Chemical mapping of a 177-nucleotide RNA with 2A3. Source: RMDB library OK1LIB, as collected in RNAgym.

RNA sequence: GGGAACGACUCGAGUAGAGUCGAAAAGCGUAAGCAAAAAUGUGAUCUUGCUUGUAAAUACAAUUUUGAGAGGUUAAUGAAUUACAAGUAGAGCUAUUUUUGUCCCUCUCUGCAAUAGACAGCCAAAGCACCGAUACUCAUUCGUGAGUAUCGGUGCAAAAGAAACAACAACAACAAC
Reactivity to 2A3 in 0.01 (KOAc 150mM, MgCl2 10mM, bicine 150mM(pH8.5), 24C), signal-to-noise 1, nucleotides 027 to 126: g020c040g050u210a010a000g000c040a040a000a010a000a000u220g000u050g300a040u120c000u000u190g000c040u000u000g000u000a010a010a010u070a260c110a000a180u090u000u160u000g080a070g000a000g100g090u050u080a020a030u160g080a130a110u000u000a040c000a010a000g000u030a140g030a030g000c030u030a000u080u000u000u000u000g080u020c010c010c010u040c010u000c040u060g010c010a020a020u040a050g200a190c100a000g070c000c020a000a000a000